Structure probing data (2A3) for a 207-nucleotide construct. The data come from the RNA Mapping Database (RMDB), library RNAMAK. For 2A3 the reverse transcriptase was SuperScript II with manganese.

[RMDB]
RNA sequence: GGGAACGACUCGAGUAGAGUCGAAAACGUUCUGAUUCGUCAGAACGAAAAAAACCUUUGUGUCCGUCCUCGCAAAUUGUCAUACUCCCAUUGGGAGUAUGAACAACUCGUACGAGGUCGGACACUCUGGUAAAAAAUCGACCGUUCGCGGUCGAAACCCAUUAUGAGAGUUCGCUCUCAUAAUGGGAAAAGAAACAACAACAACAAC
Reactivity to 2A3 in 0.01 (KOAc 150mM, MgCl2 10mM, bicine 150mM(pH8.5), 24C), signal-to-noise 2, nucleotides 027 to 156: c010g030u020u010c000u010g020a050u030u030c160g080u040c100a020g020a010a000c020g030a090a010a000a000a010a000a000c020c000u010u020u030g010u000g010u000c000c000g000u000c000c010u020c000g020c020a020a160a180u010u020g010u010c000a010u000a000c000u010c000c000c090a170u110u160g010g000g010a000g010u000a000u000g000a010a010c000a000a000c020u090c130g090u120a050c010g000a000g000g020u000c000g000g000a000c000a000c000u000c000u000g000g000u130a160a040a000a030a000a060u040c010g000a000c020c010g020u070u110c270g010c010g160g010u000c000g010a000a010a010